[RMDB]
An RNA of 207 nucleotides, treated with 2A3 and DMS and read out base by base. For 2A3 the reverse transcriptase was SuperScript II with manganese. For 2A3, 1,680 sequencing reads were counted. For DMS the reverse transcriptase was MarathonRT.
RNA sequence: GGGAACGACUCGAGUAGAGUCGAAAACUAGGGGGUAUUCCGGUGUGGGAUACUUAGUAAUAUGCAACGCUAAUUGCAUAAGAUUGUAGGACGGAAAUUACAGUCUUGGUUUUUCAAACCUGAAACUUGUGGUAGUACGCGUUCGCGCGUACUACAAUCAUUACCAUCCCUUCGGGGAUGGUAAUGAAAAAGAAACAACAACAACAAC
Reactivity to 2A3 in 0.01 (KOAc 150mM, MgCl2 10mM, bicine 150mM(pH8.5), 24C), signal-to-noise 3, nucleotides 027 to 156: c040u050a030g040g020g050g010g010u000a010u050u000c030c010g200g060u190g090u180g060g000g020a000u020a020c010u020u060a020g020u060a070a080u030a030u050g010c000a010a010c080g030c250u150a080a060u080u000g000c020a010u010a050a020g020a040u000u060g010u040a030g010g090a020c110g030g070a020a110a020u100u020a010c000a020g000u000c000u050u100g020g020u030u020u030u040u090c090a070a060a020c010c010u050g030a110a070a040c030u090u080g070u100g200g000u000a000g000u000a000c000g030c000g030u020u060c210g010c000g000c000g070u000a000c000u000a000c010a000a000
Reactivity to DMS in 0.01 (KOAc 150mM, MgCl2 10mM, bicine 150mM(pH8.5), 24C), signal-to-noise 2, nucleotides 027 to 156: c020u010a100g000g020g000g010g050u000a050u000u010c000c040g050g070u020g040u010g040g000g020a040u020a040c040u030u030a110g020u000a100a200u010a050u010g020c000a050a030c090g040c160u000a080a110u000u000g020c000a050u000a040a060g000a040u000u000g010u000a060g020g020a160c030g030g040a120a100a190u010u000a060c000a020g000u000c030u000u010g020g000u000u000u000u010u000c110a030a060a060c000c030u000g000a090a110a050c060u000u000g020u010g000g020u000a010g010u000a000c020g000c000g050u000u000c300g020c070g070c010g060u000a000c000u000a000c000a020a120